[RMDB]
RNA sequence: GGGAACGACUCGAGUAGAGUCGAAAAGGAUGCCGAUAUUGCGCUCUGUCGUUCGGAAGCUGCCUGCCCAUUGCCAGACUUCGCCGAACAUGCGUCGGUGCAAUGUACGCAUGAAGUCUUCGGUCAGGCCGGACCGGAUCUUCGGAUCCGGUCCGGCAAAAGAAACAACAACAACAAC
Reactivity to 2A3 in 0.01 (KOAc 150mM, MgCl2 10mM, bicine 150mM(pH8.5), 24C), signal-to-noise 1, nucleotides 027 to 126: g120g000a010u270g000c000c000g010a000u040a210u210u160g010c010g050c010u170c160u150g050u040c000g070u040u000c040g090g000a270a000g000c070u110g040c000c000u060g000c070c000c000a050u020u170g000c050c000a000g000a090c010u000u010c120g110c150c000g040a020a170c000a000u060g000c000g060u100c000g090g100u180g030c060a110a130u150g020u150a050c000g000c000a000u040g110a050a000g000u000c100u110u060c060g110g000u060c040a040g040
Chemical mapping of a 177-nucleotide RNA with 2A3. Reactivities are given for positions 27 through 126. The 2A3 profile rests on 335 reads.